[RMDB]
Source: RMDB library OK1LIB, as collected in RNAgym.
The record gives the reactivity of an RNA of 177 nucleotides to DMS and 2A3.
Values cover nucleotides 27 to 126.
RNA sequence: GGGAACGACUCGAGUAGAGUCGAAAAAUGACGUGAUCGCCCUUCCGCGAUAGUGCGGCGAUCGCCGGGAUAUGCCCCUCAUGCUCGCCCUUAAGCCGUAGCGCGUGCAUCUCCAGCGUGGAAUGGGAUCCUCGUCCCUAUUCGUAGGGACGAGGAUAAAAGAAACAACAACAACAAC
Reactivity to DMS in 0.01 (KOAc 150mM, MgCl2 10mM, bicine 150mM(pH8.5), 24C), signal-to-noise 1, nucleotides 027 to 126: a020u000g070a120c210g030u000g000a060u000c000g000c050c000c050u000u030c000c040g010c000g000a170u000a080g050u020g000c050g000g000c030g000a050u060c010g010c000c050g020g040g000a100u010a100u000g000c080c010c020c060u010c080a020u050g020c000u000c010g040c000c020c020u010u040a040a110g000c050c070g000u030a140g010c170g000c090g000u040g000c050a070u000c020u000c070c000a140g000c060g000u000g010g010a120a080u020g020g000g000
Reactivity to 2A3 in 0.01 (KOAc 150mM, MgCl2 10mM, bicine 150mM(pH8.5), 24C), signal-to-noise 3, nucleotides 027 to 126: a000u220g050a060c030g020u030g010a030u020c030g040c000c000c020u040u060c080c000g110c020g060a120u220a170g120u150g130c010g040g000c010g030a040u030c030g000c020c000g040g030g030a040u060a040u210g020c020c000c010c000u050c030a020u090g060c010u000c010g080c030c020c000u070u060a080a010g040c020c010g090u060a040g010c010g000c020g010u070g000c000a060u010c010u030c030c000a030g020c020g020u050g010g090a110a140u100g030g000g000

For 2A3, 1,429 sequencing reads were counted. For DMS, 2,105 sequencing reads were counted. Conditions: 150 mM KOAc, 10 mM MgCl2 and 150 mM bicine (pH 8.5), 24 C.